Structure probing data (DMS and 2A3) for a 177-nucleotide construct.
For 2A3 the reverse transcriptase was SuperScript II with manganese.
Reactivities are given for positions 27 through 126.
[RMDB]
RNA sequence: GGGAACGACUCGAGUAGAGUCGAAAAGAUAUGGAAUUCGGCCAACUAUAAUCUUAAGGUUCGAAGCCAUCUUUGUCGGAAACGACAAAGAUGGCGUAGUUUAAGGUAGUUGGCGAAUUCCUAAGUCGACAUAUUUAAACUUCGGUUUAAAUAUGUCAAAAGAAACAACAACAACAAC
Reactivity to DMS in 0.01 (KOAc 150mM, MgCl2 10mM, bicine 150mM(pH8.5), 24C), signal-to-noise 3, nucleotides 027 to 126: g010a100u010a300u000g000g000a010a020u000u000c010g030g040c000c000a000a020c010u000a110u010a300a120u010c000u010u000a000a030g000g030u010u010c090g020a180a300g000c010c000a000u000c000u000u000u000g010u000c000g030g000a110a100a230c000g000a000c000a000a000a020g020a020u000g010g020c000g010u010a050g010u000u000u000a010a030g010g020u000a000g000u000u000g010g010c000g010a000a000u000u000c000c000u010a010a100g000u010c090
Reactivity to 2A3 in 0.01 (KOAc 150mM, MgCl2 10mM, bicine 150mM(pH8.5), 24C), signal-to-noise 3, nucleotides 027 to 126: g020a040u130a080u210g020g010a000a000u010u040c090g300g120c090c010a000a010c030u050a050u130a300a300u150c020u050u020a030a060g120g060u300u150c060g160a190a020g050c010c000a000u000c020u000u000u010g040u000c050g050g030a090a110a110c040g010a020c000a000a040a000g000a000u010g010g000c000g000u000a000g010u020u050u000a000a000g000g000u020a000g010u010u000g020g000c010g000a000a010u000u040c000c000u000a040a010g080u050c070